[RMDB]
RNA sequence: GGGAACGACUCGAGUAGAGUCGAAAAUAUGGGCCUUUUUGCAUUGUGCAAAUAAACAGCUUUCGCUUCGAGACAGAUUGCCACAAUCAGUGGCGCGAAGGCAGGCAGAGUUUAUUGUGAUGCAUUCGGCUUUCGAUUGCUUCGGCAAUCGAAGGCCAAAAGAAACAACAACAACAAC
Reactivity to DMS in 0.01 (KOAc 150mM, MgCl2 10mM, bicine 150mM(pH8.5), 24C), signal-to-noise 4, nucleotides 027 to 126: u020a080u040g020g010g000c100c010u000u010u000u010u030g000c000a080u010u030g000u070g000c040a040a010a030u000a010a020a030c060a130g010c010u000u000u020c070g010c000u010u010c030g010a180g000a150c200a130g010a110u050u020g010c010c010a030c000a100a110u060c200a130g000u000g010g000c030g020c000g000a010a010g000g010c080a040g000g010c050a040g020a090g000u000u000u000a000u010u010g000u020g000a040u000g000c040a060u030u020c180
Reactivity to 2A3 in 0.01 (KOAc 150mM, MgCl2 10mM, bicine 150mM(pH8.5), 24C), signal-to-noise 6, nucleotides 027 to 126: u200a050u050g010g050g020c000c000u050u070u020u050u020g010c000a000u010u060g040u040g100c000a000a000a040u020a010a010a000c000a000g000c020u020u060u090c070g040c110u020u050c040g060a050g040a040c060a060g180a240u130u300g020c010c000a010c010a010a190u300c090a070g000u000g000g000c000g000c000g000a010a000g040g000c020a010g020g010c020a010g030a020g100u000u000u000a010u000u010g010u020g010a010u000g000c010a010u020u040c040
Chemical mapping of a 177-nucleotide RNA with DMS and 2A3.
It was measured as part of the RMDB library OK1LIB.